[RMDB]
RNA sequence: GGGAACGACUCGAGUAGAGUCGAAAAGAGACAGCCAGCCAGGGGGACACCCACACCCUGACCGUGCAUGGCGCCCAGGUUCUGGACAGCGCCAUCUACAGCUGCCGUGUGGGCGCAGAGGGGCAGGGCUCCAAAUCGUAUUCGUACGAUUUGGAGCAAAAGAAACAACAACAACAAC
Reactivity to DMS in 0.01 (KOAc 150mM, MgCl2 10mM, bicine 150mM(pH8.5), 24C), signal-to-noise 3, nucleotides 027 to 126: g000a140g000a090c070a090g020c040c030a050g010c000c010a070g020g020g010g000g010a130c110a090c040c010c030a040c150a110c030c040c020u010g000a090c030c020g010u000g010c160a120u010g000g010c020g010c000c000c000a040g010g010u010u010c070u000g000g000a120c090a100g010c020g020c070c070a040u000c050u000a060c090a110g020c020u000g000c040c030g010u000g020u000g020g010g000c030g000c040a070g000a130g000g020g010g000c060a040g000g000
Reactivity to 2A3 in 0.01 (KOAc 150mM, MgCl2 10mM, bicine 150mM(pH8.5), 24C), signal-to-noise 1, nucleotides 027 to 126: g080a020g010a030c020a020g050c040c000a000g010c010c000a000g030g000g040g010g020a010c000a060c040c000c000a030c020a020c020c010c010u030g030a080c000c040g110u070g020c060a080u070g100g000c000g060c010c000c000a000g100g060u190u150c070u110g100g040a120c010a050g020c030g020c000c060a030u010c000u060a040c000a040g020c010u050g020c030c030g070u100g010u030g010g030g020c000g040c020a030g060a050g030g030g000g040c010a040g000g050
Conditions: 150 mM KOAc, 10 mM MgCl2 and 150 mM bicine (pH 8.5), 24 C. Structure probing data (DMS and 2A3) for a 177-nucleotide construct. The 2A3 profile rests on 2,217 reads. It was measured as part of the RMDB library OK2TRN. DMS adducts were read by reverse transcription with MarathonRT. Reactivities are given for positions 27 through 126.